[RMDB]
RNA sequence: GGGAACGACUCGAGUAGAGUCGAAAACGUAGUCACAGACAGGUUCGACAACAUUCAAGCCAAACAUCUCUGUGUAUUGGCCGAUGUAUAUUGCAGCUCCAAGAGGUGUCCUUCGAUAAUCGGGAUGCGUUGGUGCGGUAUUCGUACCGCACCAACGAAAAGAAACAACAACAACAAC
Reactivity to 2A3 in 0.01 (KOAc 150mM, MgCl2 10mM, bicine 150mM(pH8.5), 24C), signal-to-noise 1, nucleotides 027 to 126: c010g060u040a030g030u030c020a010c010a160g070a050c000a020g070g000u090u120c060g050a020c050a090a020c020a020u040u100c060a090a010g000c010c000a040a000a010c010a080u010c120u000c050u300g040u040g070u140a300u050u050g030g000c030c000g020a040u040g070u020a080u020a030u050u080g000c070a010g000c010u000c000c000a040a030g070a010g010g020u030g040u080c000c020u020u080c010g110a150u060a160a080u120c060g000g030g040a030u080g010
Reactivity to DMS in 0.01 (KOAc 150mM, MgCl2 10mM, bicine 150mM(pH8.5), 24C), signal-to-noise 1, nucleotides 027 to 126: c060g040u000a070g000u010c040a100c070a070g020a110c070a100g020g000u020u010c060g010a170c160a030a070c020a070u000u000c070a090a170g040c000c050a050a040a050c020a020u000c150u010c190u020g020u000g000u000a050u010u000g050g100c010c000g000a040u000g000u000a070u000a110u000u000g010c120a060g000c020u010c060c020a050a030g010a090g000g000u000g020u020c010c040u000u000c060g000a060u010a080a070u010c050g000g000g000a040u000g000